[RMDB]
RNA sequence: GGGAACGACUCGAGUAGAGUCGAAAAGACGGUCCGAGUGUGACGAUGGCGGUGAGCGAUAAUAAUGCGAUCACCUUGAACACCCAGGAUGCCGAUACGAUUGGGGCAGCCAGUGACAGCGACAGCAAUUAGUGAAAAUCUUCGGAUUUUCACUAAUAAAAGAAACAACAACAACAAC
Reactivity to 2A3 in 0.01 (KOAc 150mM, MgCl2 10mM, bicine 150mM(pH8.5), 24C), signal-to-noise 5, nucleotides 027 to 126: g040a030c040g000g030u000c010c000g010a070g050u080g010u040g010a060c060g090a110u100g080g060c050g010g000u030g000a010g030c020g030a010u050a190a120u130a070a040u300g030c020g010a020u010c000a020c020c000u000u070g040a050a020c030a020c000c010c000a010g040g000a020u080g030c020c010g020a040u070a120c050g050a080u060u180g020g000g010g030c010a010g040c000c010a020g020u030g060a020c010a030g040c020g030a010c020a010g010c020a060
Reactivity to DMS in 0.01 (KOAc 150mM, MgCl2 10mM, bicine 150mM(pH8.5), 24C), signal-to-noise 9, nucleotides 027 to 126: g000a110c080g010g010u010c020c020g010a070g010u010g010u010g010a110c110g010a090u010g010g020c110g010g020u000g000a090g020c020g010a050u010a090a120u020a100a080u010g010c010g000a060u000c010a030c020c020u000u010g000a150a060c070a070c020c010c020a120g010g000a070u000g000c020c010g000a100u010a070c130g000a140u010u010g010g010g000g020c050a070g000c030c040a070g010u000g000a050c080a050g000c030g000a050c100a060g010c120a110
Conditions: 150 mM KOAc, 10 mM MgCl2 and 150 mM bicine (pH 8.5), 24 C. An RNA of 177 nucleotides, treated with 2A3 and DMS and read out base by base. The DMS profile rests on 16,263 reads. High 2A3 reactivity points to a flexible backbone, as in loops and unpaired stretches. 2A3 adducts were read by reverse transcription with SuperScript II with manganese. Reactivities are rounded to 0.1 and cut off at 0 and 3.